[RMDB]
RNA sequence: GGGAACGACUCGAGUAGAGUCGAAAAGAUAUGGACCGAGUGGGCUUCAAUGAUGUAUCUCGGAAACGAGAUAUUGAGAAGCCACCGGUCCUAAGUCAAAACUGUGAACGGUUCGCCGUUCACAGAAGUGCCUUCUAAACUUCGGUUUAGAAGGCACAAAAGAAACAACAACAACAAC
Reactivity to 2A3 in 0.01 (KOAc 150mM, MgCl2 10mM, bicine 150mM(pH8.5), 24C), signal-to-noise 1, nucleotides 027 to 126: g000a000u070a070u140g020g000a000c020c030g000a140g130u050g140g220g080c020u060u010c130a210a300u150g000a050u100g000u000a030u000c000u000c030g030g070a080a020a000c000g000a000g010a000u000a000u040u040g050a020g040a040a000g000c040c000a000c000c000g020g000u010c010c000u000a020a010g020u000c010a020a010a140a210c020u040g000u000g000a030a000c020g010g060u030u060c230g110c140c020g000u000u010c000a000c000a000g010a040a010
Reactivity to DMS in 0.01 (KOAc 150mM, MgCl2 10mM, bicine 150mM(pH8.5), 24C), signal-to-noise 1, nucleotides 027 to 126: g000a060u000a300u000g000g000a010c000c000g000a150g050u000g000g020g010c020u000u000c000a140a280u000g000a270u010g010u000a040u000c000u000c000g020g000a100a100a250c030g000a000g020a000u000a000u000u020g000a130g000a000a010g010c000c000a000c010c000g000g000u000c000c000u000a000a070g000u010c010a030a040a190a140c010u000g000u000g010a000a060c000g020g070u000u000c300g030c000c000g030u000u010c000a000c000a000g000a060a090